[RMDB]
RNA sequence: GGGAACGACUCGAGUAGAGUCGAAAAUGUUUAAGACAGAGACAUAGGCCAGGUGUGGCUCACGCCUGUAAUUCCAGCACUUUGGGAGGCCGAGGCGGGCAGGUCACCUGAGGUCAGGAGUUUAAGAUCUCACAACCAGAUUCGUCUGGUUGUGAGAAAAAGAAACAACAACAACAAC
Reactivity to DMS in 0.01 (KOAc 150mM, MgCl2 10mM, bicine 150mM(pH8.5), 24C), signal-to-noise 1, nucleotides 027 to 126: u020g010u000u000u030a110a140g020a110c090a070g030a110g010a050c040a000u000a120g000g030c070c030a100g000g010u000g040u010g000g020c030u000c050a090c060g010c030c030u000g000u000a120a060u000u000c020c010a030g030c230a060c150u020u010u010g020g000g000a010g000g000c030c110g010a050g010g020c030g010g010g010c090a080g020g010u010c000a070c020c100u000g000a070g000g020u000c080a120g020g020a070g020u020u000u020a050a140g000a110
Chemical mapping of a 177-nucleotide RNA with DMS.